[RMDB]
RNA sequence: GGGAACGACUCGAGUAGAGUCGAAAAGGCAGAACACACUUAGACCGGUAGGCGAGCGCGUUACACUUAACAAUAUAGACGGGCAUGAUCCGCACGCUGCGCAUGCUCAGAUGCUGCAGGCCAUACGCCAUGAACGCACAUUCGUGUGCGUUCAUGGAAAAGAAACAACAACAACAAC
Reactivity to DMS in 0.01 (KOAc 150mM, MgCl2 10mM, bicine 150mM(pH8.5), 24C), signal-to-noise 2, nucleotides 027 to 126: g000g020c010a050g030a110a060c050a080c110a080c040u030u000a110g040a110c050c030g000g000u020a090g010g010c000g020a040g010c050g020c050g030u010u000a090c130a040c080u010u010a070a150c110a070a120u030a050u010a110g000a140c080g020g000g000c030a060u010g010a080u020c070c060g030c040a080c150g000c100u000g000c050g030c010a030u000g020c090u000c090a050g000a070u000g000c020u000g000c050a060g000g010c100c060a060u000a020c160g000
Reactivity to 2A3 in 0.01 (KOAc 150mM, MgCl2 10mM, bicine 150mM(pH8.5), 24C), signal-to-noise 2, nucleotides 027 to 126: g050g070c040a020g090a190a000c040a000c010a010c150u090u090a070g050a090c030c060g080g020u050a050g030g030c010g010a010g030c020g000c030g060u020u060a050c080a020c030u090u130a120a030c040a100a070u160a010u060a150g090a070c070g000g000g000c020a000u050g060a080u120c030c020g010c050a040c080g150c100u070g000c050g020c010a020u030g000c020u010c050a050g000a150u070g030c020u050g000c000a020g050g000c030c000a110u110a150c070g010